[RMDB]
RNA sequence: GGGAACGACUCGAGUAGAGUCGAAAAGAUUUAAACAGAUGGAGAUACACAAAUGUUUGAAUCCCAGUAACAAAAAUCCUGGUAUCUCGGGUAUACAGUAGUGCAGACACUGUAUUUUUAAUGCUCCUUAGGUUUUCCAUCUUCGGAUGGAAAACAACCUAGCAAUAUGCUUCGGCAUAUUGCUAGGAAAAGAAACAACAACAACAAC
Reactivity to 2A3 in 0.01 (KOAc 150mM, MgCl2 10mM, bicine 150mM(pH8.5), 24C), signal-to-noise 1, nucleotides 027 to 156: g010a000u030u010u030a000a020a000c030a000g040a050u040g000g010a020g000a010u000a000c020a000c000a050a120a060u020g000u010u020u020g040a040a040u030c000c000c010a040g090u130a070a130c160a120a160a010a000a070u090c000c000u000g010g010u000a020u010c010u000c030g000g010g000u030a010u000a000c000a000g030u170a040g050u110g170c130a040g050a130c020a000c040u030g020u020a030u000u020u020u060u200a210a160u050g010c020u130c060c100u120u130a060g080g060u030u000u030u000c000c000a000u000c000u030u050c110g140g000a000u000g000g000a000a020a000a000c000a030a030
Source: RMDB library M2RFOK, as collected in RNAgym. Chemical mapping of a 207-nucleotide RNA with 2A3. The RNA was probed in 150 mM KOAc, 10 mM MgCl2 and 150 mM bicine (pH 8.5) at 24 C. For 2A3, 750 sequencing reads were counted.